[RMDB]
RNA sequence: GGGAACGACUCGAGUAGAGUCGAAAACUCGAAAGAGACCUGCAUAUCUUAGGCAGAUGAUCAAGUCACGUCUGAAAAGCGAAAGCCCUAAGAUAUGCAGCUGUGAGGACUUGACGCAGAAAAUAAACGCCUAUAUCGCGUUCGCGCGAUAUAGGCGAAAAGAAACAACAACAACAAC
Reactivity to 2A3 in 0.01 (KOAc 150mM, MgCl2 10mM, bicine 150mM(pH8.5), 24C), signal-to-noise 1, nucleotides 027 to 126: c000u010c030g050a000a070a000g060a000g050a050c010c000u000g020c000a000u010a020u000c000u020u000a010g000g030c000a000g000a030u050g000a010u220c000a000a000g030u010c000a000c090g000u000c000u000g060a190a160a160a000g060c050g030a100a000a000g000c000c000c000u000a000a000g010a000u000a000u000g020c000a000g000c000u010g030u020g000a080g000g060a000c000u000u000g010a000c010g000c010a000g050a010a040a000a000u270a050a070a030